Structure probing data (2A3) for a 177-nucleotide construct. 2A3 adducts were read by reverse transcription with SuperScript II with manganese. For 2A3, 489 sequencing reads were counted. Values are in units of 0.01, from 0 to 300, in steps of 10.
[RMDB]
RNA sequence: GGGAACGACUCGAGUAGAGUCGAAAAGCGUUGCGGGGGCCGCGAGGAGUGGGUGAUGGACACCAUGGCGGCGGUGGCCGCCGAGGUGGCGGCGGCGUUGCGGAUCAGUCAGGGUCUGGCGGCCAGCAUGCCUCUUGCUGUUCGCAGCAAGAGGCAUAAAAGAAACAACAACAACAAC
Reactivity to 2A3 in 0.01 (KOAc 150mM, MgCl2 10mM, bicine 150mM(pH8.5), 24C), signal-to-noise 1, nucleotides 027 to 126: g020c000g020u090u100g000c000g000g060g050g000g000c010c000g000c010g010a040g080g040a060g050u090g000g110g020u090g000a160u070g000g030a000c010a000c100c000a000u060g030g000c130g000g040c020g020g140u240g260g000c000c000g000c010c000g000a100g060g000u040g010g040c010g010g010c000g000g000c040g110u110u080g030c010g040g000a060u100c040a030g160u090c020a000g120g000g000u010c010u050g080g000c000g000g000c000c000a010g040c000